[RMDB]
RNA sequence: GGGAACGACUCGAGUAGAGUCGAAAAAAAGAUAUGGAUCCGUGAACUACAUUGACCACCAGCGAUGAAAGUUCAUCGGAAACGAUGAACUGGAGCUGGUGAGUCAAUGCACGGAUCCUAAGUCAAACAAUGUCUUGAAGUUCGCUUCAAGACAUUGAAAAGAAACAACAACAACAAC
Reactivity to DMS in 0.01 (KOAc 150mM, MgCl2 10mM, bicine 150mM(pH8.5), 24C), signal-to-noise 4, nucleotides 027 to 126: a090a080a080g010a010u000a260u000g000g000a000u000c000c000g030u000g000a090a050c170u020a300c010a010u000u000g010a010c000c000a020c010c000a010g020c010g000a110u030g000a110a110a030g010u000u000c000a000u010c000g000g000a040a030a090c000g000a010u000g000a000a000c000u000g000g010a030g040c000u000g010g020u000g000a030g000u000c000a010a000u000g010c010a010c000g020g000a000u000c000c000u000a000a060g000u000c010a120a100a260
Reactivity to 2A3 in 0.01 (KOAc 150mM, MgCl2 10mM, bicine 150mM(pH8.5), 24C), signal-to-noise 2, nucleotides 027 to 126: a000a000a010g030a020u030a020u100g000g010a000u000c000c000g010u000g000a030a020c070u230a030c300a020u000u010g000a000c000c000a000c000c000a000g000c010g300a300u040g000a020a000a000g000u010u010c000a000u000c000g000g000a000a010a000c010g000a000u010g000a010a000c000u010g010g000a000g000c000u000g000g000u000g000a000g000u000c000a000a000u000g010c000a000c020g000g000a000u000c000c010u000a000a010g000u010c000a010a020a020
The record gives the reactivity of an RNA of 177 nucleotides to DMS and 2A3. Conditions: 150 mM KOAc, 10 mM MgCl2 and 150 mM bicine (pH 8.5), 24 C. For DMS the reverse transcriptase was MarathonRT.